Structure probing data (2A3 and DMS) for a 177-nucleotide construct.

[RMDB]
RNA sequence: GGGAACGACUCGAGUAGAGUCGAAAACAGUAUGCCUUCGGGCAUACUGAAACCAGAGGGUAUCUGGCCCUCGCUCCCAUGCGUGCCGGGAAUCCCAUCCCAAAACGGAUGUCUUCGGACAUCCGAACCACAAUCCUAAGUUCGCUUAGGAUUGUGGAAAAGAAACAACAACAACAAC
Reactivity to 2A3 in 0.01 (KOAc 150mM, MgCl2 10mM, bicine 150mM(pH8.5), 24C), signal-to-noise 4, nucleotides 027 to 126: c000a000g000u000a000u010g000c000c020u050u130c300g100g000g000c010a000u010a000c000u000g000a060a000a000c030c010a030g040a020g060g060g000u100a090u200c100u120g160g000c010c020c000u000c000g010c010u040c010c020c010a010u110g030c020g040u050g020c030c030g000g020g020a020a060u060c010c010c010a050u020c020c000c000a040a050a010a020c020g010g000a000u000g000u000c010u030u090c220g090g000a000c000a010u010c000c000g010a010a020
Reactivity to DMS in 0.01 (KOAc 150mM, MgCl2 10mM, bicine 150mM(pH8.5), 24C), signal-to-noise 3, nucleotides 027 to 126: c010a000g000u000a010u000g010c000c000u000u030c260g030g000g020c000a010u000a000c010u000g000a020a080a070c110c190a090g000a030g000g010g010u000a060u010c120u000g000g020c040c040c010u010c020g010c060u000c020c040c030a090u000g010c080g030u000g000c060c090g010g000g000a060a070u000c010c010c020a190u000c000c020c010a050a030a090a130c010g010g000a030u000g000u000c000u000u000c130g030g000a020c010a000u000c000c000g020a010a080

For 2A3 the reverse transcriptase was SuperScript II with manganese. It was measured as part of the RMDB library M2PK50. Reactivities are given for positions 27 through 126.